Source: RMDB library OK3TST, as collected in RNAgym. Chemical mapping of a 207-nucleotide RNA with 2A3. For 2A3 the reverse transcriptase was SuperScript II with manganese. The reactions ran in a buffer of 150 mM KOAc, 10 mM MgCl2 and 150 mM bicine (pH 8.5), at 24 C.

RNA sequence: GGGAACGACUCGAGUAGAGUCGAAAACAAGGAACUCAGGGAUCCUUUCGCUGAGGAGCCCUUCACCAAGGAGUUUCUUCUUAAGCGGAGGGGUGAAAGAAGACUGGGGAUUGGUCAGGCAGACAGAGAAAGGCACUGCAGGUGGAGGGAACGGCCACGCAGUAAAAUGGUUCGCCAUUUUACUGCGAAAAGAAACAACAACAACAAC
Reactivity to 2A3 in 0.01 (KOAc 150mM, MgCl2 10mM, bicine 150mM(pH8.5), 24C), signal-to-noise 1, nucleotides 027 to 156: c040a020a070g050g010a010a080c000u020c050a050g000g020g080a050u070c010c010u000u060u040c060g010c070u090g000a030g040g000a010g000c000c040c000u040u010c160a220c090c070a040a050g050g010a070g030u100u120u040c000u010u000c020u060u040a120a010g000c020g030g000a020g030g000g000g000u050g070a070a020a050g050a040a000g070a040c070u030g010g010g000g000a060u050u040g030g020u020c040a040g050g000c010a000g020a050c040a030g060a020g050a080a050a010g040g050c030a020c070u090g000c020a040g000g030u070g000g060a050g020g000g030a030a050c020g000g000c040c020a010